[RMDB]
RNA sequence: GGGAACGACUCGAGUAGAGUCGAAAACAUCCGACAGUUCGCUGUCGGAUGAAAACCUUUGUGUCCAUCAUACGCGACGAUCUGAUACUGCCCAUUGGGCAGAUCAGGGAGCGUAUAUGGACACUCUGGUAAAGUUUGUUGCCUUCGGGCAACAAACCUUGUGUGCGAUCUUCGGAUCGCACACAAGAAAAGAAACAACAACAACAAC
Reactivity to 2A3 in 0.01 (KOAc 150mM, MgCl2 10mM, bicine 150mM(pH8.5), 24C), signal-to-noise 1, nucleotides 027 to 156: c000a010u000c000c000g020a010c000a000g020u120u120c160g060c300u010g040u000c000g000g010a000u000g000a010a000a000a000c000c000u020u000u000g000u000g000u000c000c000a000u130c090a000u000a000c000g060c010g110a300c010g000a060u020c010u010g000a000u140a300c000u010g050c030c030c070a300u150u300g000g000g000c010a000g000a000u000c000a010g000g010g000a000g000c000g000u000a000u000a000u000g000g000a010c010a000c000u000c000u000g030g000u070a170a040a070g000u000u000u010g000u010u000g000c000c000u010u070c250g030g010g000c000a000a000c000a020a000a010c010